RNA sequence: GGGAACGACUCGAGUAGAGUCGAAAAUUUGUAAAUUGUAACUAUUUUUUUUAGUUUUGAUUCGAUCACAAUUGAAACGAAACAUUAGAAUCAAAUCAAUUCCAACUGGAAGAAAAAAUGGUGAAUAUUAUAAGUCGCUAUUCGUAGCGACUUAUAAAAAAGAAACAACAACAACAAC
Reactivity to DMS in 0.01 (KOAc 150mM, MgCl2 10mM, bicine 150mM(pH8.5), 24C), signal-to-noise 1, nucleotides 027 to 126: u010u020u040g000u000a090a150a210u030u030g000u010a100a030c000u000a000u000u090u030u000u000u060u000u050a060g010u000u000u000u000g000a030u000u000c020g000a120u000c160a110c040a000a090u000u080g000a070a020a160c190g100a100a050a060c120a040u020u060a110g000a020a050u000c000a020a000a010u000c010a080a150u010u000c010c040a190a070c210u060g000g050a020a060g000a040a060a000a010a000a040u000g000g010u000g010a080a070u010a040
Reactivity to 2A3 in 0.01 (KOAc 150mM, MgCl2 10mM, bicine 150mM(pH8.5), 24C), signal-to-noise 1, nucleotides 027 to 126: u120u150u080g010u030a000a140a300u050u060g000u020a010a000c020u000a020u000u010u000u000u000u000u080u300a070g020u020u000u000u000g000a000u000u000c010g020a030u080c120a020c070a190a090u150u230g050a180a150a050c070g100a050a000a000c000a100u090u040a090g050a020a020u000c000a020a000a010u030c020a020a030u050u010c020c000a100a130c300u270g010g030a030a030g030a000a010a000a000a000a000u020g000g000u040g010a060a010u030a030
Annotation:
Structure probing data (DMS and 2A3) for a 177-nucleotide construct. The data come from the RNA Mapping Database (RMDB), library RFM100. For 2A3, 386 sequencing reads were counted. DMS (dimethyl sulfate) methylates the pairing face of unpaired adenines and cytosines. DMS adducts were read by reverse transcription with MarathonRT. The reactions ran in a buffer of 150 mM KOAc, 10 mM MgCl2 and 150 mM bicine (pH 8.5), at 24 C.